About this RNA: This 177-nucleotide RNA was probed chemically with DMS and 2A3. For DMS the reverse transcriptase was MarathonRT. Reactivities are given for positions 27 through 126. The data come from the RNA Mapping Database (RMDB), library OK1LIB. For 2A3, 17,359 sequencing reads were counted. For 2A3 the reverse transcriptase was SuperScript II with manganese. Conditions: 150 mM KOAc, 10 mM MgCl2 and 150 mM bicine (pH 8.5), 24 C.
[RMDB]
RNA sequence: GGGAACGACUCGAGUAGAGUCGAAAAUGGGCAUGUUUUUUUUACAAUGGUAUGAGUCCAUAACAUAUGAUUUAUGGUCUUAUAGAUCAAAACGCAUAUGAAAAUAUACUUAUUGAUGCCUUACAAAACUGAUACCUAAUUUCGAUUAGGUAUCAGUAAAAGAAACAACAACAACAAC
Reactivity to DMS in 0.01 (KOAc 150mM, MgCl2 10mM, bicine 150mM(pH8.5), 24C), signal-to-noise 7, nucleotides 027 to 126: u020g000g010g020c040a060u010g010u000u000u000u010u010u010u020u020a160c090a040a050u010g000g020u000a030u010g000a110g010u020c050c070a020u000a060a140c040a040u000a020u000g000a190u010u000u000a090u000g010g000u000c000u000u050a090u020a040g010a020u010c000a020a020a030a060c260g010c010a010u000a000u000g010a070a040a070a130u010a030u000a010c030u000u010a060u010u010g010a070u000g010c000c000u010u030a080c170a030a060a070
Reactivity to 2A3 in 0.01 (KOAc 150mM, MgCl2 10mM, bicine 150mM(pH8.5), 24C), signal-to-noise 9, nucleotides 027 to 126: u080g010g000g010c030a040u020g120u070u040u010u010u000u020u040u080a110c090a080a050u050g030g000u050a050u150g080a050g070u050c070c030a020u040a040a020c010a010u040a020u050g040a070u030u020u060a170u070g010g000u000c000u080u250a250u230a220g020a010u040c000a010a030a010a010c120g010c020a010u030a010u040g060a060a020a060a000u200a000u030a030c040u160u130a060u070u150g040a010u020g010c020c000u050u070a060c080a030a100a030